RNA sequence: GGGAACGACUCGAGUAGAGUCGAAAAGGUAUACGUAUGACUUCGUGGUGACGUAUAAGUUUUUUGGUACUGACCGUUAUGUCGGUUAUACGGGGUAUAAGGUGUGUGACCCGGCGGUUGCUAAUCCCUGCCGAAUUGAAUUCGUUCAAUUCGGCAGAAAAGAAACAACAACAACAAC
Reactivity to 2A3 in 0.01 (KOAc 150mM, MgCl2 10mM, bicine 150mM(pH8.5), 24C), signal-to-noise 3, nucleotides 027 to 126: g130g000u070a040u020a060c060g010u020a030u150g150a050c040u060u050c150g250u190g070g060u050g010a020c000g030u020a000u010a060a120g000u010u000u000u000u080u140g090g050u060a040c010u060g120a030c000c010g010u100u030a150u230g150u160c020g000g000u010u010a030u010a050c010g010g040g000g090u160a060u040a140a030g180g000u050g000u020g010u070g210a080c000c000c000g000g000c020g000g000u030u110g010c030u040a040a090u150c000c000
Reactivity to DMS in 0.01 (KOAc 150mM, MgCl2 10mM, bicine 150mM(pH8.5), 24C), signal-to-noise 2, nucleotides 027 to 126: g000g000u010a000u030a050c030g040u000a090u000g030a100c020u000u010c120g040u010g010g010u020g000a060c030g000u000a020u000a010a040g000u000u020u030u020u000u020g000g000u050a110c040u020g000a070c080c070g020u010u000a110u010g020u030c020g000g020u000u000a060u000a050c040g010g020g000g000u000a080u010a010a040g010g010u030g000u000g010u020g010a020c060c000c120g000g000c090g000g000u000u020g030c060u000a090a130u000c030c080